[RMDB]
RNA sequence: GGGAACGACUCGAGUAGAGUCGAAAAGAACCAUCCGAGAGCACACAGAGAUCCUUGAGUGUGUGUGAGAGGCAAGGAUGAGAGAGAGACCUAUUAAGCGGUAUAGGGACGCGAGAGAGGAUGGGAACCCAAUAGUAAACUUCGGUUUACUAUUGGGAAAAGAAACAACAACAACAAC
Reactivity to DMS in 0.01 (KOAc 150mM, MgCl2 10mM, bicine 150mM(pH8.5), 24C), signal-to-noise 8, nucleotides 027 to 126: g000a140a170c020c000a020u000c010c020g000a170g000a240g000c010a030c020a050c030a070g000a140g010a090u010c020c040u000u020g010a110g000u010g010u010g010u010g000u010g000a100g020a130g000g010c070a090a090g000g000a050u010g000a100g010a080g000a100g000a120g000a120c020c020u000a060u010u020a050a130g030c110g000g010u010a070u010a070g010g000g000a080c060g000c060g000a070g000a100g000a130g000g000a040u000g000g010g000a080a160
Reactivity to 2A3 in 0.01 (KOAc 150mM, MgCl2 10mM, bicine 150mM(pH8.5), 24C), signal-to-noise 9, nucleotides 027 to 126: g060a040a040c000c000a010u010c010c010g100a070g010a010g080c010a010c000a000c000a030g050a010g010a190u070c020c030u090u090g060a120g070u050g010u000g000u010g010u070g030a140g010a030g050g040c040a050a040g050g010a060u110g020a040g000a000g000a000g000a000g020a110c000c010u030a060u110u120a120a030g060c040g030g030u070a050u090a100g040g000g020a030c020g010c060g030a030g000a000g000a000g040g010a020u020g000g000g000a010a010